The record gives the reactivity of an RNA of 177 nucleotides to DMS and 2A3. For DMS, 1,767 sequencing reads were counted. For 2A3 the reverse transcriptase was SuperScript II with manganese.
RNA sequence: GGGAACGACUCGAGUAGAGUCGAAAAGCGUAGCUUACGCCUACUUUGGAUGUGAGGAAGGUACUAUGUACUUUGUGCCUAGAGCUAAGUCUGUUGUCUCAAGGAUUGGAGACUCCAUCUUUACAGGGUGAGAACAUAGGUUCGCCUAUGUUCUCACAAAAGAAACAACAACAACAAC
Reactivity to DMS in 0.01 (KOAc 150mM, MgCl2 10mM, bicine 150mM(pH8.5), 24C), signal-to-noise 2, nucleotides 027 to 126: g020c030g000u010a050g000c080u000u010a050c140g020c000c020u010a120c070u010u010u010g000g000a070u000g000u010g000a060g000g010a090a040g000g000u010a050c010u000a060u000g020u000a050c020u000u000u010g030u010g010c000c010u000a090g020a100g010c070u000a080a050g000u000c090u010g020u000u010g000u010c020u000c050a120a120g020g010a080u000u010g030g000a170g000a040c040u000c020c020a080u010c000u000u000u020a080c150a080g000g010
Reactivity to 2A3 in 0.01 (KOAc 150mM, MgCl2 10mM, bicine 150mM(pH8.5), 24C), signal-to-noise 2, nucleotides 027 to 126: g040c050g060u040a000g030c030u080u040a000c070g010c000c000u040a090c080u130u090u120g080g050a060u070g060u050g070a070g040g010a100a010g000g030u000a000c030u100a020u180g060u040a050c060u100u070u080g040u040g000c000c020u010a030g020a000g000c020u030a060a040g040u040c020u020g130u110u030g020u060c020u000c020a030a030g080g040a100u130u250g070g010a040g000a020c020u010c010c000a050u020c000u090u060u050a080c020a030g130g040